[RMDB]
RNA sequence: GGGAACGACUCGAGUAGAGUCGAAAACAUCUUUCCUCCCUACACAGUGACUCCAGCUUGGGAGGGGCAGCGCUAGGCUGAGCCAGCACUCCCUGUGGUGUCUGCCUGCCACGUGCAGCUCUGGAGUAAAACCUGGAGAAGUUCGCUUCUCCAGGAAGUUCAGAUCUGUGUUCGCACAGAUCUGAACAAAAGAAACAACAACAACAAC
Reactivity to 2A3 in 0.01 (KOAc 150mM, MgCl2 10mM, bicine 150mM(pH8.5), 24C), signal-to-noise 2, nucleotides 027 to 156: c040a090u090c120u160u140u060c010c010u050c010c000c000u150a120c170a030c030a140g100u050g070a020c000u000c000c000a030g010c030u050u060g000g010g000a000g010g000g000g020c020a070g030c010g020c020u110a060g020g000c000u050g020a010g090c070c000a000g000c010a030c030u070c040c080c070u150g040u250g070g000u030g040u030c010u010g010c000c010u010g000c010c010a070c070g020u090g000c000a040g020c030u000c030u090g000g000a000g000u000a000a060a010a020c000c000u000g000g010a000g010a020a010g000u030u180c170g000c100u000u010c000u000c000c000a000g000g000a000a000
Chemical mapping of a 207-nucleotide RNA with 2A3. For 2A3 the reverse transcriptase was SuperScript II with manganese.